[RMDB]
RNA sequence: GGGAACGACUCGAGUAGAGUCGAAAAAGGAUCCGAUGGAAAGCCUCCCCGGAUGGAGAAAGUCUAAACGGAUCCUGUGAGGCCGCCGUGAGGAUCGGGUAAGACGAACAGUCGAAUGCUGCCAGCCUGUAUCCAUCUAUUUCGAUAGAUGGAUACAAAAAGAAACAACAACAACAAC
Reactivity to DMS in 0.01 (KOAc 150mM, MgCl2 10mM, bicine 150mM(pH8.5), 24C), signal-to-noise 9, nucleotides 027 to 126: a030g010g000a010u000c000c000g010a190u010g000g000a040a080a090g000c300c010u000c000c020c070c150g030g020a180u030g000g000a020g010a120a170a090g010u010c020u000a030a110a140c020g000g000a020u000c020c020u000g010u010g010a080g000g010c020c080g000c070c030g010u010g000a150g000g010a050u010c040g010g010g010u010a080a100g010a050c020g010a080a090c150a110g010u000c020g000a080a080u020g010c030u000g000c020c020a110g000c060c060
Reactivity to 2A3 in 0.01 (KOAc 150mM, MgCl2 10mM, bicine 150mM(pH8.5), 24C), signal-to-noise 9, nucleotides 027 to 126: a000g020g000a000u000c000c010g020a040u070g020g020a070a060a040g080c000c000u030c010c010c020c060g230g020a140u180g030g000a030g030a050a120a010g090u010c020u050a070a120a110c020g010g000a000u000c010c000u010g030u060g010a050g020g000c020c020g010c010c010g050u040g040a060g030g030a060u080c040g000g000g010u080a060a030g030a020c030g020a160a050c040a090g050u030c020g020a050a030u110g020c020u020g010c000c010a030g020c010c010

About this RNA:
This 177-nucleotide RNA was probed chemically with DMS and 2A3. Conditions: 150 mM KOAc, 10 mM MgCl2 and 150 mM bicine (pH 8.5), 24 C. 2A3 adducts were read by reverse transcription with SuperScript II with manganese. It was measured as part of the RMDB libraries RFM100 and RFMREP.